The data come from the RNA Mapping Database (RMDB), library OK3TST. Structure probing data (2A3 and DMS) for a 207-nucleotide construct. For DMS, 2,242 sequencing reads were counted. The RNA was probed in 150 mM KOAc, 10 mM MgCl2 and 150 mM bicine (pH 8.5) at 24 C. DMS adducts were read by reverse transcription with MarathonRT. For 2A3, 1,429 sequencing reads were counted.

RNA sequence: GGGAACGACUCGAGUAGAGUCGAAAAAUUUCAUUGUGUUUGUAUUUGUCUCCAUAGAAUCUAGUAUAAUGCUAUGUGUACAUAUGUACACAUAUGCGUGUACAUACGUGCAUGCACACACAGACUUACAUACACAGGGCUUGCAGAGGAAUAAAUACAUUACCAGGACGUUCGCGUCCUGGUAAUGAAAAGAAACAACAACAACAAC
Reactivity to 2A3 in 0.01 (KOAc 150mM, MgCl2 10mM, bicine 150mM(pH8.5), 24C), signal-to-noise 3, nucleotides 027 to 156: a000u070u140u130c120a120u130u070g000u000g020u070u000u010g020u030a120u050u070u120g010u000c010u000c050c030a050u040a120g070a080a100u100c070u050a060g020u030a100u090a250a080u140g020c010u010a010u060g000u000g000u020a000c010a060u200a050u290g000u000a010c000a010c010a000u050a020u120g000c010g000u010g020u000a000c030a040u060a040c070g010u000g000c010a020u040g030c010a000c000a000c000a000c010a140g030a020c010u020u050a030c020a010u060a020c030a000c000a000g060g010g000c050u070u070g000c060a020g060a060g040g100a080a050u110a150a040a020u270a110
Reactivity to DMS in 0.01 (KOAc 150mM, MgCl2 10mM, bicine 150mM(pH8.5), 24C), signal-to-noise 1, nucleotides 027 to 156: a130u000u010u000c030a080u000u010g060u000g000u010u010u020g030u030a080u000u010u010g020u000c000u010c060c060a140u010a180g010a070a060u000c050u000a200g050u000a080u010a040a040u050g000c020u010a020u020g010u000g030u000a020c020a120u000a080u030g050u010a020c010a010c010a040u000a020u000g020c070g080u000g010u000a000c010a120u000a060c090g060u010g000c050a020u040g020c090a080c040a070c090a090c040a040g030a040c040u000u000a010c040a040u010a040c010a020c010a090g000g000g040c080u000u010g030c000a090g010a080g020g050a130a070u000a010a020a120u000a160